[RMDB]
This 177-nucleotide RNA was probed chemically with 2A3. The reactions ran in a buffer of 150 mM KOAc, 10 mM MgCl2 and 150 mM bicine (pH 8.5), at 24 C. Source: RMDB library OK1LIB, as collected in RNAgym.
RNA sequence: GGGAACGACUCGAGUAGAGUCGAAAAGUGCUCGACGGGGUGCGGGCGUGCGUCGACAACGAGGAGUUCGGCUACCCGCCGUUGGGCGAGGACAGCCUGCCGAGGGCGACGGCCGAUUGGUGCCGACCUGGGGUGUCUUCUUCGGAAGACACCCCAGAAAAGAAACAACAACAACAAC
Reactivity to 2A3 in 0.01 (KOAc 150mM, MgCl2 10mM, bicine 150mM(pH8.5), 24C), signal-to-noise 2, nucleotides 027 to 126: g090u030g050c000u060c020g000a000c000g120g240g000g010u170g060c000g050g050g000c050g000u010g000c080g000u090c060g000a050c060a100a000c050g090a010g210g000a080g080u000u150c040g000g020c000u040a050c020c000c000g000c000c010g050u170u170g130g000g000c000g020a050g000g040a090c080a010g020c000c010u110g030c040c020g060a080g000g100g000c050g110a020c040g040g060c010c000g070a110u090u300g090g000u160g000c010c000g060a100c000